[RMDB]
RNA sequence: GGGAACGACUCGAGUAGAGUCGAAAAUGUAAUUUUUCUGAUGUAAGAACUUCUAGAUCCUUCUGAAUAGUAAGACACCGGAGGGUUCUAAAUACUCACUUUAUUGUGAGCUGUGUGCAGACUUAGAGAAGGGUAGAAUUGUGCAGAUCUCCCUGCCCUGUCAUUACUCAUUCGUGAGUAAUGACAGAAAAGAAACAACAACAACAAC
Reactivity to 2A3 in 0.01 (KOAc 150mM, MgCl2 10mM, bicine 150mM(pH8.5), 24C), signal-to-noise 2, nucleotides 027 to 156: u130g050u070a010a150u040u030u020u050u060c070u050g090a120u040g030u170a090a080g000a090a090c080u070u020c010u050a010g020a090u040c040c000u000u030c010u030g020a030a020u020a090g030u040a110a020g030a040c030a000c010c020g010g080a030g040g050g000u070u040c020u040a050a080a030u100a050c000u020c030a040c010u010u120u110a100u300u170g010u000g000a030g000c020u030g080u010g000u010g070c010a010g050a180c010u030u070a010g010a020g000a100a020g010g030g000u020a010g050a060a060u060u070g030u040g020c010a000g020a100u000c030u040c040c000c000u020g070c040c000
Reactivity to DMS in 0.01 (KOAc 150mM, MgCl2 10mM, bicine 150mM(pH8.5), 24C), signal-to-noise 2, nucleotides 027 to 156: u000g010u000a050a080u000u000u000u000u000c050u050g010a170u010g030u000a070a140g010a070a140c070u010u000c030u000a030g000a050u010c020c000u010u000c030u000g000a120a120u000a080g000u000a060a120g010a170c060a080c100c000g030g010a020g050g000g000u000u020c030u000a050a100a050u000a020c000u000c000a030c000u000u010u010a110u050u000g040u000g000a030g030c000u000g020u000g020u000g040c020a130g020a120c030u010u000a090g000a140g010a050a010g030g030g030u020a110g000a070a080u000u000g040u010g010c080a100g000a100u000c090u010c020c000c020u000g000c060c020